[RMDB]
RNA sequence: GGGAACGACUCGAGUAGAGUCGAAAAGGCAGACAGAAAGUCUGUCCACGAAUAGCGAAUUUCGGGAGUAAAGCUGACUAAGCAAGUAGAGUCAGUUUAACCGACUAAACUAGCUUGUCAUAGCAGCAGUUACAUACAAAUUCGUUUGUAUGUAACUAAAAGAAACAACAACAACAAC
Reactivity to DMS in 0.01 (KOAc 150mM, MgCl2 10mM, bicine 150mM(pH8.5), 24C), signal-to-noise 9, nucleotides 027 to 126: g000g010c010a010g010a020c010a170g020a120a130a170g010u000c000u000g010u000c010c050a080c090g010a090a050u010a060g010c050g000a110a140u010u010u010c030g000g000g010a140g020u010a070a060a070g000c010u000g000a030c010u010a000a170g010c140a050a060g010u020a040g000a030g000u000c040a020g010u000u010u010a090a090c100c070g000a100c060u010a040a070a200c030u000a130g010c010u000u000g000u010c060a060u030a050g000c060a060g000c090
Reactivity to 2A3 in 0.01 (KOAc 150mM, MgCl2 10mM, bicine 150mM(pH8.5), 24C), signal-to-noise 9, nucleotides 027 to 126: g000g000c000a000g000a000c010a010g290a160a140a010g000u000c000u000g000u000c000c010a050c010g050a060a060u050a060g050c040g040a030a050u020u030u020c010g020g010g020a060g040u130a040a050a010g000c000u000g030a100c000u020a020a000g040c030a030a010g030u020a030g040a010g030u020c040a010g000u040u060u080a050a040c010c010g010a000c030u080a060a090a050c010u020a030g060c000u010u000g050u050c040a080u040a060g010c010a000g010c000